Chemical mapping of a 177-nucleotide RNA with DMS. The RNA was probed in 150 mM KOAc, 10 mM MgCl2 and 150 mM bicine (pH 8.5) at 24 C. For DMS the reverse transcriptase was MarathonRT. It was measured as part of the RMDB library OK2TST.
[RMDB]
RNA sequence: GGGAACGACUCGAGUAGAGUCGAAAAAUGGUUGCAGUACCAGCAAAGGCACGAGAGUGGGAAAACGACCCCGAGAGUGAGCCUGACACUCCCUCGCGUAGCGCAGGUUCAACGUUGGAAAGUGCCAUGGAUCGGAUAUGUUCGCAUAUCCGAUCCAAAAAGAAACAACAACAACAAC
Reactivity to DMS in 0.01 (KOAc 150mM, MgCl2 10mM, bicine 150mM(pH8.5), 24C), signal-to-noise 1, nucleotides 027 to 126: a160u010g000g000u010u000g040c130a160g000u000a140c020c040a090g000c050a040a140a130g000g010c020a000c000g000a120g010a090g010u000g000g000g000a040a060a120a100c300g000a120c060c010c050c000g010a120g000a160g010u010g000a010g000c010c000u000g000a120c060a040c010u000c070c000c070u000c250g010c060g050u000a010g040c050g000c020a010g020g020u020u000c010a040a040c070g000u000u010g020g010a090a070a090g000u000g000c000c000a060